[RMDB]
This 177-nucleotide RNA was probed chemically with DMS and 2A3. DMS adducts were read by reverse transcription with MarathonRT. Reactivities are given for positions 27 through 126. High 2A3 reactivity points to a flexible backbone, as in loops and unpaired stretches.
RNA sequence: GGGAACGACUCGAGUAGAGUCGAAAAUAUAUACCCACUUGCUGGAAUUGGUAGACAGGCUAGAUUUAGGCUCUAGUAUCUUAGGAUGUGAGAGUUCAAGUCUCUCAGUGGGUACUAAAAAUAAUUAACGUAAUGAGGUAUUCGUACCUCAUUACGUAAAAGAAACAACAACAACAAC
Reactivity to DMS in 0.01 (KOAc 150mM, MgCl2 10mM, bicine 150mM(pH8.5), 24C), signal-to-noise 6, nucleotides 027 to 126: u010a100u010a300u000a040c000c000c000a030c030u000u010g010c010u000g010g000a030a020u020u010g010g020u010a030g010a300c010a000g020g000c010u000a010g000a030u000u000u010a130g000g010c300u010c000u000a020g010u000a010u000c010u000u010a130g010g010a020u010g000u000g000a010g000a030g000u010u000c030a050a300g000u000c000u000c000u000c020a000g000u000g000g000g010u000a020c160u010a000a050a070a090a080u000a030a050u000u000a060
Reactivity to 2A3 in 0.01 (KOAc 150mM, MgCl2 10mM, bicine 150mM(pH8.5), 24C), signal-to-noise 3, nucleotides 027 to 126: u070a010u020a000u030a020c000c000c000a000c000u000u030g030c000u020g000g070a140a230u300u160g150g060u230a000g020a010c010a000g020g000c000u000a000g000a060u100u150u240a150g090g020c020u020c010u000a010g010u010a010u000c000u030u070a150g060g110a010u040g020u000g020a000g000a000g000u000u030c030a010a000g010u000c000u000c000u000c000a010g000u000g000g050g000u020a000c000u020a010a050a020a000a030u190a050a130u200u100a030